[RMDB]
RNA sequence: GGGAACGACUCGAGUAGAGUCGAAAAUGAUCUGGUCGUCAGUUGAGGCAAGCGCAUUCUGGAUUUGCGUUACGUUCAUGAUAUCCUCCACUUGCUUCAAUGUCUGUGUGGGGACCUGCGCCAACUGCGCAGGGCGUGAGUUCGCUCACGCCCUGCGAAAAGAAACAACAACAACAAC
Reactivity to DMS in 0.01 (KOAc 150mM, MgCl2 10mM, bicine 150mM(pH8.5), 24C), signal-to-noise 3, nucleotides 027 to 126: u000g010a060u010c040u000g000g030u000c030g000u000c040a080g020u010u000g000a070g020g010c040a060a040g010c030g000c110a070u000u000c170u000g000g010a080u000u010u000g010c070g020u010u000a100c170g010u010u010c060a060u010g000a060u000a090u000c020c040u000c090c020a060c010u000u000g000c040u000u000c100a040a040u010g000u000c080u000g000u010g030u000g010g000g000g000a050c050c040u000g010c040g000c020c050a060a080c150u010g000
Reactivity to 2A3 in 0.01 (KOAc 150mM, MgCl2 10mM, bicine 150mM(pH8.5), 24C), signal-to-noise 3, nucleotides 027 to 126: u120g020a030u030c050u090g000g050u060c070g130u050c070a090g000u020u020g060a040g060g040c020a040a000g000c020g020c080a050u040u120c040u230g230g100a240u080u060u130g050c030g060u070u090a060c070g030u020u080c010a030u130g070a040u050a030u140c000c000u030c020c010a020c010u020u040g030c000u160u160c060a080a190u170g050u060c040u040g120u000g050u130g020g010g000g010a010c000c000u020g020c020g000c010c000a080a050c050u130g040

Structure probing data (DMS and 2A3) for a 177-nucleotide construct.
For DMS, 3,664 sequencing reads were counted.
The 2A3 profile rests on 2,620 reads.
Conditions: 150 mM KOAc, 10 mM MgCl2 and 150 mM bicine (pH 8.5), 24 C.
The data come from the RNA Mapping Database (RMDB), library OK2TRN.